Source: RMDB library TTRDEL, as collected in RNAgym. Structure probing data (DMS and 2A3) for a 177-nucleotide construct. The DMS profile rests on 4,310 reads. 2A3 adducts were read by reverse transcription with SuperScript II with manganese. The 2A3 profile rests on 13,674 reads. The reactions ran in a buffer of 150 mM KOAc, 10 mM MgCl2 and 150 mM bicine (pH 8.5), at 24 C. DMS adducts were read by reverse transcription with MarathonRT.
RNA sequence: GGGAACGACUCGAGUAGAGUCGAAAAGAUAUGGACAAGGUUUGGCGCCAGCGAGGUCGGAAACGACUCCCCACCGCUGGAACUACGCUGAUCUUGUCCUAAGUCAAAAGCAGUGUUCGCACUGCAAGUAUUCAAGUGAGUUCGCUCACUUGAAUACAAAAGAAACAACAACAACAAC
Reactivity to DMS in 0.01 (KOAc 150mM, MgCl2 10mM, bicine 150mM(pH8.5), 24C), signal-to-noise 5, nucleotides 027 to 126: g010a040u010a300u010g010g000a010c000a040a010g010g020u000u000u020g040g010c000g020c010c000a010g020c010g010a080g030g010u000c010g000g010a080a100a160c010g000a020c020u010c060c020c010c040a300c060c000g000c000u000g000g000a030a030c110u000a300c040g000c010u000g000a000u000c000u000u010g000u000c010c020u010a010a080g000u000c040a070a040a110a080g010c000a010g020u000g000u000u010c180g010c000a010c000u000g010c010a040a050
Reactivity to 2A3 in 0.01 (KOAc 150mM, MgCl2 10mM, bicine 150mM(pH8.5), 24C), signal-to-noise 4, nucleotides 027 to 126: g010a010u090a050u160g020g000a000c000a000a000g040g120u100u270u300g170g000c020g030c000c000a000g010c000g010a020g000g020u020c020g010g020a050a100a070c030g020a020c030u070c010c010c000c000a030c020c010g000c000u010g000g060a020a020c090u230a020c040g000c010u000g010a010u000c000u000u010g000u000c000c000u010a050a010g050u030c040a010a050a090a110g000c000a010g010u030g060u140u230c270g070c100a000c000u000g000c010a010a010